[RMDB]
RNA sequence: GGGAACGACUCGAGUAGAGUCGAAAAAAACUUUUGUGACUUGCUGAAACGGGACUAAUCUCCUCACCGAGGCUAAGCAAGUAAAAUACGCCUCUCAUAUCCUUACCUGAGGGAGGUAAGGAAAUAACCUGCAACGCUUCCUUCGGGAAGCGUUGAACUAUUGUAAUACGUUCGCGUAUUACAAUAGAAAAGAAACAACAACAACAAC
Reactivity to 2A3 in 0.01 (KOAc 150mM, MgCl2 10mM, bicine 150mM(pH8.5), 24C), signal-to-noise 4, nucleotides 027 to 156: a000a000a000c090u140u090u090u120g080u050g050a040c000u020u010g000c010u040g050a090a080a070c050g010g000g010a000c010u050a070a090u050c030u030c050c000u030c030a060c030c060g010a000g000g000c030u030a020a000g000c010a020a040g050u120a010a020a010a010u110a040c040g010c010c000u020c000u000c040a050u060a060u190c000c000u000u000a000c000c000u030g060a120g020g090g000a000g010g000u000a000a000g010g000a000a010a010u020a000a030c010c040u090g010c010a000a000c000g000c010u010u010c000c000u030u040c180g040g000g000a000a000g000c000g000u000u000g000a000a010
Reactivity to DMS in 0.01 (KOAc 150mM, MgCl2 10mM, bicine 150mM(pH8.5), 24C), signal-to-noise 1, nucleotides 027 to 156: a020a040a040c030u000u000u000u000g020u000g020a090c010u010u010g020c030u010g010a090a060a070c050g000g000g030a090c040u000a120a130u000c060u000c000c010u010c080a140c110c030g010a020g030g030c060u000a120a060g000c000a040a040g000u000a030a010a060a050u000a040c080g000c000c010u000c000u000c010a100u000a130u000c000c010u000u000a030c010c010u000g000a140g000g000g030a270g000g010u000a010a010g000g000a000a020a050u000a030a040c070c020u010g010c010a040a000c010g000c000u020u000c000c000u010u000c300g030g040g020a000a000g010c000g000u000u000g000a020a120